The record gives the reactivity of an RNA of 177 nucleotides to DMS. The reactions ran in a buffer of 150 mM KOAc, 10 mM MgCl2 and 150 mM bicine (pH 8.5), at 24 C. DMS adducts were read by reverse transcription with MarathonRT. It was measured as part of the RMDB library OK2TST.
RNA sequence: GGGAACGACUCGAGUAGAGUCGAAAAGGUUUUUGAUGAUAUCAUGGAGCCACUAUACCAGCCCUAGAACUGCCCAGUUCCAGAUUGAGCACCAUAAAUGUCCUUAUGUUUUAAGCUAUUGAUACUCUGGAGAUAUUGGGUUCGCCCAAUAUCUCCAAAAAGAAACAACAACAACAAC
Reactivity to DMS in 0.01 (KOAc 150mM, MgCl2 10mM, bicine 150mM(pH8.5), 24C), signal-to-noise 1, nucleotides 027 to 126: g010g020u010u010u000u010u000g030a100u000g000a120u000a300u010c000a020u010g000g050a190g030c040c010a050c100u020a120u010a080c040c010a060g030c040c030c020u010a060g000a060a100c020u030g000c030c030c040a130g020u010u000c030c040a100g000a080u000u000g000a070g000c060a000c060c070a050u000a040a080a040u000g000u000c070c030u000u040a010u000g000u030u000u000u000a080a220g010c100u010a110u010u040g000a080u010a060c110u000c130